[RMDB]
RNA sequence: GGGAACGACUCGAGUAGAGUCGAAAAGUAGUGGGGAAGAAAGAAGUGGAAACACUUCGCGCACGUCCACUACAACGUGCGCAGUAUUGGAGUGUUUGAGGGAGAACCUCAAGCACUCCAGUACAAAGAUAGCGAUCCUAUUCGUAGGAUCGCUAUCAAAAGAAACAACAACAACAAC
Reactivity to DMS in 0.01 (KOAc 150mM, MgCl2 10mM, bicine 150mM(pH8.5), 24C), signal-to-noise 4, nucleotides 027 to 126: g010u000a020g010u000g020g000g000g000a060a060g000a090a090a060g000a000a010g020u000g000g000a120a070a140c010a010c010u000u000c000g010c000g020c000a010c010g000u010c020c050a100c080u000a020c050a210a010c190g000u000g000c000g020c010a190g010u010a000u000u000g000g000a030g000u000g010u010u000u000g010a020g000g000g000a230g020a120a130c000c000u000c010a000a000g010c000a000c000u000c000c000a000g000u000a000c010a080a080a110
Reactivity to 2A3 in 0.01 (KOAc 150mM, MgCl2 10mM, bicine 150mM(pH8.5), 24C), signal-to-noise 8, nucleotides 027 to 126: g020u040a020g010u080g040g050g020g050a070a050g060a070a190a010g010a020a000g010u000g010g030a040a030a010c000a000c000u010u010c010g000c000g000c000a000c000g010u020c020c010a050c030u020a020c010a010a000c000g000u000g000c010g000c040a030g000u000a000u010u010g000g000a000g000u000g010u000u010u000g010a010g010g040g020a200g100a270a270c000c010u000c000a000a000g000c000a000c000u000c000c000a000g000u000a000c000a000a020a000